[RMDB]
Notes:
This 207-nucleotide RNA was probed chemically with 2A3. 2A3 is a SHAPE reagent: it acylates the 2'-hydroxyl of flexible nucleotides of all four kinds.

RNA sequence: GGGAACGACUCGAGUAGAGUCGAAAAGGCCUUGCCGUCGUGAGCCAGACGGUUGGCUUUGUGGAAGCCAAGAUGUCGUCCUGUCGGGUCAGGGCUUUCAGACGUUACUAUCACGAGUGCCUAGGUGCUUUGCCUUUUGAUUACGUCAGAAAGAAUCCCCACAUGCAGUAUUCGUACUGCAUGUGGGAAAAGAAACAACAACAACAAC
Reactivity to 2A3 in 0.01 (KOAc 150mM, MgCl2 10mM, bicine 150mM(pH8.5), 24C), signal-to-noise 2, nucleotides 027 to 156: g000g000c000c000u020u070g020c010c000g020u020c030g040u100g120a020g050c040c040a060g020a010c000g020g070u010u030g030g000c040u030u030u030g290u070g070g180a020a010g010c000c010a040a030g300a230u220g050u000c010g040u000c000c000u090g000u030c030g030g000g040u140c000a000g000g000g000c000u060u010u000c070a040g000a000c010g100u140u080a090c060u060a050u170c090a040c090g000a000g000u070g000c000c030u040a090g060g020u100g110c110u110u120u140g000c040c000u050u050u060u060g040a080u050u110a030c060g040u000c070a020g090a040a080a010g120a080a100u270c190

The RNA was probed in 150 mM KOAc, 10 mM MgCl2 and 150 mM bicine (pH 8.5) at 24 C.